[RMDB]
RNA sequence: GGGAACGACUCGAGUAGAGUCGAAAAGAUAUGGAAGGAAUGACGUCGGUAAUACGGAUUUCGGAAACGAAAUCCGUGCCAGACGCAUUUCCUUCCUAAGUCAAAAUCCAUUACUUCGGUAAUGGAAGAUUCUUACAUAGUUCGCUAUGUAAGAAUCAAAAGAAACAACAACAACAAC
Reactivity to 2A3 in 0.01 (KOAc 150mM, MgCl2 10mM, bicine 150mM(pH8.5), 24C), signal-to-noise 7, nucleotides 027 to 126: g020a030u090a040u180g000g010a000a010g010g040a010a010u060g160a300c010g000u010c030g000g070u160a260a140u210a300c010g010g000a000u000u010u010c020g010g010a070a080a070c010g000a000a000a010u000c000c000g000u000g000c010c000a030g000a010c000g000c000a000u040u040u050c000c000u000u000c000c000u000a030a000g010u000c010a010a020a020a300u000c000c000a000u000u010a010c010u030u090c300g150g010u010a000a010u000g000g000a010a030
Reactivity to DMS in 0.01 (KOAc 150mM, MgCl2 10mM, bicine 150mM(pH8.5), 24C), signal-to-noise 7, nucleotides 027 to 126: g000a040u010a300u000g000g000a020a010g010g000a040a000u000g000a160c000g030u000c000g020g010u000a150a130u020a230c000g010g000a020u000u000u000c000g000g010a080a090a200c000g010a000a000a000u000c000c000g040u000g000c020c010a110g030a010c010g010c010a020u010u010u010c000c000u000u000c000c000u000a020a100g000u010c030a120a080a140a170u010c000c000a010u000u000a010c000u000u010c250g020g010u000a010a000u000g000g000a030a050